[RMDB]
RNA sequence: GGGAACGACUCGAGUAGAGUCGAAAACCGCGCGACGUAGAGCGGGUGCUGGGCAGCAGCCAGCUGCUGACCAAGUCGCAGGAGUACUCCUUCCUGGGCCGCUGGCUCAACGAGGGACUGCUGGUGAGUGCCACUCAGUAUUCGUACUGAGUGGCACAAAAGAAACAACAACAACAAC
Reactivity to DMS in 0.01 (KOAc 150mM, MgCl2 10mM, bicine 150mM(pH8.5), 24C), signal-to-noise 2, nucleotides 027 to 126: c010c010g020c070g020c010g010a030c000g020u000a050g010a160g000c030g020g030g010u000g050c030u010g000g000g010c010a020g040c010a110g000c060c060a100g020c000u010g030c000u010g010a030c010c060a120a090g010u010c010g000c020a160g000g010a140g020u010a080c220u000c030c000u000u000c020c030u000g000g010g020c010c040g000c230u010g000g000c000u000c020a010a070c240g010a030g000g000g020a070c180u000g000c020u000g000g010u000g010a110
Reactivity to 2A3 in 0.01 (KOAc 150mM, MgCl2 10mM, bicine 150mM(pH8.5), 24C), signal-to-noise 2, nucleotides 027 to 126: c000c000g000c010g030c020g090a020c090g040u210a110g030a020g200c030g030g070g100u120g070c060u050g000g040g000c000a020g050c010a000g060c030c010a040g040c030u040g000c010u020g030a080c010c020a040a010g050u030c030g040c040a020g000g070a050g060u090a080c020u000c000c000u010u040c000c020u020g030g010g020c020c010g300c300u270g000g000c010u000c010a040a050c080g030a010g000g060g000a040c050u070g010c000u030g000g080u120g000a040
An RNA of 177 nucleotides, treated with DMS and 2A3 and read out base by base.
For DMS the reverse transcriptase was MarathonRT.
The reactions ran in a buffer of 150 mM KOAc, 10 mM MgCl2 and 150 mM bicine (pH 8.5), at 24 C.